[RMDB]
RNA sequence: GGGAACGACUCGAGUAGAGUCGAAAAACCGAAUUCGUUCGGUGGUGCACCGUAGGAGCGUAACUGGAGCUUGGAUUUACUAAGUGGUUCGAAAGAGCCACGAAAGUUGUCAGCUCCAGCCCGCUCCUAAACGGGAUAUAUGACUUUCGAGUCAUAAUAAGAGUAGAGAUUUCGAUCUCUACUCUUAAAAAGAAACAACAACAACAAC
Reactivity to 2A3 in 0.01 (KOAc 150mM, MgCl2 10mM, bicine 150mM(pH8.5), 24C), signal-to-noise 2, nucleotides 027 to 156: a000c010c010g030a030a020u170u080c230g110u090u000c000g030g000u040g050g100u110g080c080a080c090c020g040u030a010g020g000a000g000c020g020u010a080a060c010u000g010g000a000g000c020u140u210g090g030a070u300u280u210a010c010u020a040a060g000u000g000g010u010u000c010g040a070a060a080g000a040g000c000c020a000c010g000a040a000a000g020u020u030g030u020c010a010g000c000u000c000c010a000g000c000c000c000g000c020u000c000c000u000a000a000a000c000g000g010g000a010u040a040u020a010u190g020a010c010u110u130u160c250g050a000g000u000c000a000u030a070a080
Reactivity to DMS in 0.01 (KOAc 150mM, MgCl2 10mM, bicine 150mM(pH8.5), 24C), signal-to-noise 3, nucleotides 027 to 156: a050c000c020g020a020a050u000u000c280g020u000u000c000g020g020u000g000g030u000g020c030a120c010c000g040u010a050g010g020a040g040c010g010u010a060a030c010u010g010g000a030g020c010u000u000g030g000a050u000u010u010a040c020u000a080a300g010u000g010g010u000u000c000g040a140a100a300g010a030g010c000c000a010c000g000a050a060a110g010u000u000g000u000c020a080g000c000u000c000c010a020g030c030c050c010g010c010u000c040c010u000a000a020a050c010g000g000g020a120u000a130u010a050u000g000a020c000u000u010u000c240g020a060g020u000c010a010u000a040a270